[RMDB]
RNA sequence: GGGAACGACUCGAGUAGAGUCGAAAAUUCCUGAGCCUUGUACACACCGCCCGUCACGUCAUGGGAGCCGAGGGUGCCCGAAGCCGCCACGAUUCAGUGGUGUCCACGGCAAGAUCGGUGACUGGGACUUUCUUGUUUUCUUCGGAAAACAAGAAAGAAAAGAAACAACAACAACAAC
Reactivity to 2A3 in 0.01 (KOAc 150mM, MgCl2 10mM, bicine 150mM(pH8.5), 24C), signal-to-noise 1, nucleotides 027 to 126: u020u030c000c000u010g040a020g030c010c020u090u080g050u110a020c050a000c020a020c000c030g080c000c000c010g030u030c040a050c100g040u020c060a040u070g000g030g040a020g040c010c000g000a010g040g030g020u020g010c000c010c010g000a000a000g010c000c010g000c000c000a020c010g110a110u260u280c080a020g010u000g010g040u000g000u000c000c010a010c020g000g000c000a010a000g060a060u030c020g050g010u010g010a020c040u060g040g020g000a010
Reactivity to DMS in 0.01 (KOAc 150mM, MgCl2 10mM, bicine 150mM(pH8.5), 24C), signal-to-noise 2, nucleotides 027 to 126: u020u010c000c000u000g020a110g000c040c000u000u010g010u000a060c100a110c070a060c040c080g010c030c000c010g010u010c090a120c120g000u000c060a040u000g030g000g000a300g000c000c020g000a050g000g030g010u000g000c000c000c010g000a130a130g000c050c000g010c000c010a010c020g000a150u000u000c200a120g000u000g020g010u000g000u000c000c000a300c300g000g000c010a030a070g000a100u010c030g010g000u000g010a240c040u000g010g000g010a140